This 207-nucleotide RNA was probed chemically with 2A3. Values are in units of 0.01, from 0 to 300, in steps of 10. For 2A3, 776 sequencing reads were counted.
RNA sequence: GGGAACGACUCGAGUAGAGUCGAAAACGUGACGCGUGGAGGAGAGCCCGGGUCGCGCUCUUGGGGGUAACCCCUUUGAGACUUGACCGGUUCCUCUCCCACCCUGCCGAGCUUCCUGCCGCUAGUCGAGCGGACUCCGGGUUAGCUCUCCGACCCUUGGUAUAAUCUGGUUCGCCAGAUUAUACCAAAAAGAAACAACAACAACAAC
Reactivity to 2A3 in 0.01 (KOAc 150mM, MgCl2 10mM, bicine 150mM(pH8.5), 24C), signal-to-noise 1, nucleotides 027 to 156: c010g100u110g020a110c070g040c040g090u060g020g030a070g020g000a010g000a000g000c070c010c040g000g000g030u150c160g080c000g060c050u010c000u000u000g000g010g000g020g000u020a030a050c030c030c000c010u000u010u080g000a000g000a000c030u250u300g000a010c010c010g010g000u150u190c000c010u020c000u000c000c000c000a010c000c000c000u020g000c010c030g010a000g020c000u020u010c010c010u040g020c000c000g000c010u110a080g290u230c100g160a080g010c000g020g010a020c030u070c120c070g000g000g030u090u010a000g000c010u000c000u020c020c020g070a100c020c010c000u010